Annotation: Conditions: 150 mM KOAc, 10 mM MgCl2 and 150 mM bicine (pH 8.5), 24 C. Structure probing data (DMS) for a 177-nucleotide construct. DMS adducts were read by reverse transcription with MarathonRT. Values cover nucleotides 27 to 126.

RNA sequence: GGGAACGACUCGAGUAGAGUCGAAAAAUUUUUUCCCCGUCAAGGGAUGAUGGCCACGUUUUUGAUAGAGCAAAUCAUUAAUUUUUUAUUUUGCCAGUUGCAAACAAUUGUGUGUUGUUUGUGGUGGCAACUACCUUCCUUUCGAGGAAGGUAGUUGAAAAGAAACAACAACAACAAC
Reactivity to DMS in 0.01 (KOAc 150mM, MgCl2 10mM, bicine 150mM(pH8.5), 24C), signal-to-noise 1, nucleotides 027 to 126: a020u000u010u000u010u000u000c010c020c000c090g020u000c150a060a080g000g000g000a050u000g000a010u010g020g020c020c000a070c110g030u010u000u000u010u000g010a110u000a120g010a160g000c110a080a090a050u010c010a040u000u010a040a020u000u010u000u020u010u000a150u050u030u020u010g010c000c000a040g000u000u000g000c010a010a010a020c000a020a020u010u030g030u010g020u020g020u000u010g000u010u000u010g000u000g000g010u010g000g010